[RMDB]
RNA sequence: GGGAACGACUCGAGUAGAGUCGAAAAAGUGAGGGCAACAUCAGUUCAUACACACGCGGCAGCAUCGGUUCGAAGGAAACCUCCAGCUCGUCCUCUGGAUCCAGAGUCCCAUCCUCGCCAUCAUCGAGAUCCUCCCCGCGUACCACCCGCGCCGAGCGAACCGGCGUAGGUUCGCCUACGCCGGUUCAAAAGAAACAACAACAACAAC
Reactivity to 2A3 in 0.01 (KOAc 150mM, MgCl2 10mM, bicine 150mM(pH8.5), 24C), signal-to-noise 2, nucleotides 027 to 156: a000g140u150g000a100g020g060g000c020a100a040c000a120u140c030a000g000u090u000c010a030u110a180c050a000c040a030c070g010c030g040g000c040a020g010c010a070u110c050g050g000u090u050c040g070a110a010g070g010a020a080a030c000c010u030c050c000a020g010c020u030c020g030u020c040c040u090c060u080g020g040a000u070c080c000a030g000a030g160u040c000c000c000a060u100c020c050u040c010g030c030c010a120u100c030a050u100c050g030a010g030a190u080c000c030u020c020c020c010c010g030c000g000u020a060c020c020a030c020c030c020g060c000g030c080c000g040a020g100c030
This 207-nucleotide RNA was probed chemically with 2A3. Reactivities are given for positions 27 through 156. The RNA was probed in 150 mM KOAc, 10 mM MgCl2 and 150 mM bicine (pH 8.5) at 24 C.